[RMDB]
RNA sequence: GGGAACGACUCGAGUAGAGUCGAAAACUGCUUAACUUCGGUUAAGCAGAAAGUGAUCAAAGCCGUAAGACACCGGCAAGUGACCGGCAGCACAAGCCGAAAAAACGGAUGACUUCGGUCAUCCGAAUCAAUUCAGAGUGUUCGCACUCUGAAUUGAAAAAGAAACAACAACAACAAC
Reactivity to DMS in 0.01 (KOAc 150mM, MgCl2 10mM, bicine 150mM(pH8.5), 24C), signal-to-noise 2, nucleotides 027 to 126: c000u000g010c000u010u000a010a000c000u000u030c140g010g000u000u020a010a010g010c000a000g000a030a030a090g010u020g010a100u010c040a110a110a140g020c000c010g000u000a110a160g010a160c090a060c140c000g000g010c050a020a180g010u000g010a080c080c030g010g000c030a070g020c070a060c140a040a140g010c000c040g000a000a030a070a050a120a160c020g030g000a000u000g000a000c000u000u000c180g010g000u010c000a020u000c000c000g010a040a030
Reactivity to 2A3 in 0.01 (KOAc 150mM, MgCl2 10mM, bicine 150mM(pH8.5), 24C), signal-to-noise 1, nucleotides 027 to 126: c000u010g000c000u000u000a010a000c010u020u030c080g090g000u010u010a000a000g010c000a000g000a000a000a010g020u020g040a100u050c020a050a120a020g010c000c000g060u090a080a090g120a040c050a030c050c010g000g020c030a020a020g020u000g050a070c050c000g010g000c020a020g090c030a040c020a100a040g000c040c040g060a110a030a000a000a010a000c030g000g000a000u010g020a000c000u020u050c240g060g000u000c000a000u000c000c000g000a000a020

Structure probing data (DMS and 2A3) for a 177-nucleotide construct.
Values cover nucleotides 27 to 126.
DMS (dimethyl sulfate) methylates the pairing face of unpaired adenines and cytosines.
The 2A3 profile rests on 2,173 reads.
For 2A3 the reverse transcriptase was SuperScript II with manganese.
Conditions: 150 mM KOAc, 10 mM MgCl2 and 150 mM bicine (pH 8.5), 24 C.